[RMDB]
This 177-nucleotide RNA was probed chemically with 2A3 and DMS. 2A3 adducts were read by reverse transcription with SuperScript II with manganese. The reactions ran in a buffer of 150 mM KOAc, 10 mM MgCl2 and 150 mM bicine (pH 8.5), at 24 C. The data come from the RNA Mapping Database (RMDB), library OK2TST. DMS adducts were read by reverse transcription with MarathonRT. For 2A3, 4,051 sequencing reads were counted.

RNA sequence: GGGAACGACUCGAGUAGAGUCGAAAAUGUGGACUCGGACCGUGAGAGUGAACGUGAUACGGUAUUCAUCACAACUUAUGGCUUCAUACAAGGCCUCGAACUCAAGGCUGAUGAGAGCCAAGCUGUGGAAAACCAAACAUUUCGAUGUUUGGUUUUCAAAAGAAACAACAACAACAAC
Reactivity to 2A3 in 0.01 (KOAc 150mM, MgCl2 10mM, bicine 150mM(pH8.5), 24C), signal-to-noise 4, nucleotides 027 to 126: u120g020u060g070g070a030c010u010c030g030g070a040c000c050g000u020g060a070g010a010g050u070g080a100a020c030g050u060g010a060u050a130c000g020g020u050a090u060u140c100a090u120c010a020c010a030a000c010u070u080a060u180g000g000c020u010u010c010a010u050a190c070a110a020g070g010c010c000u010c040g120a180a100c010u020c180a030a010g000g000c010u020g020a020u050g010a060g000a000g020c000c010a000a000g010c010u020g000u020g040
Reactivity to DMS in 0.01 (KOAc 150mM, MgCl2 10mM, bicine 150mM(pH8.5), 24C), signal-to-noise 6, nucleotides 027 to 126: u010g020u010g020g010a100c040u010c050g000g010a090c030c030g030u000g020a150g000a090g030u000g010a100a100c140g010u010g010a120u000a070c040g010g000u000a140u000u000c090a100u020c010a010c030a020a020c010u010u010a110u000g010g000c000u010u000c020a050u000a110c160a080a190g010g000c000c000u000c050g010a080a160c300u010c070a070a030g010g000c000u000g010a050u000g000a070g000a020g010c000c000a020a030g000c020u000g020u000g000